[RMDB]
RNA sequence: GGGAACGACUCGAGUAGAGUCGAAAACGGGCAAUCAGCACGCUGCGGGUUAUCGUGUGAACGAUGUCACGCCCAGAAGUACUAACGCCGUUCACGGCAAUCGUCCCGGCAGCCGGCCUGGGUACGCUAUCAAUAGUACGUUCGCGUACUAUUGAUAAAAAGAAACAACAACAACAAC
Reactivity to DMS in 0.01 (KOAc 150mM, MgCl2 10mM, bicine 150mM(pH8.5), 24C), signal-to-noise 9, nucleotides 027 to 126: c080g010g010g020c020a120a090u010c140a100g010c090a090c120g010c040u010g010c030g000g000g010u010u010a040u010c020g020u000g010u010g010a070a020c030g010a030u000g010u010c060a100c130g010c010c020c020a120g000a090a100g010u000a050c060u010a120a140c120g010c040c010g010u000u000c070a050c030g010g000c140a070a040u010c060g010u000c030c010c000g020g020c030a070g010c080c080g020g000c030c010u000g010g010g010u000a020c060g020c280
Reactivity to 2A3 in 0.01 (KOAc 150mM, MgCl2 10mM, bicine 150mM(pH8.5), 24C), signal-to-noise 8, nucleotides 027 to 126: c020g000g020g000c030a040a190u100c040a170g070c060a010c060g030c030u050g000c020g030g060g000u100u150a100u170c050g010u040g010u020g110a040a020c020g010a020u030g030u090c040a010c110g050c000c000c000a020g070a110a020g020u050a030c030u050a100a030c040g010c010c010g020u050u060c070a040c050g050g000c050a040a120u090c030g030u040c000c000c000g090g040c010a020g030c030c020g070g000c010c010u060g010g000g030u040a020c030g000c040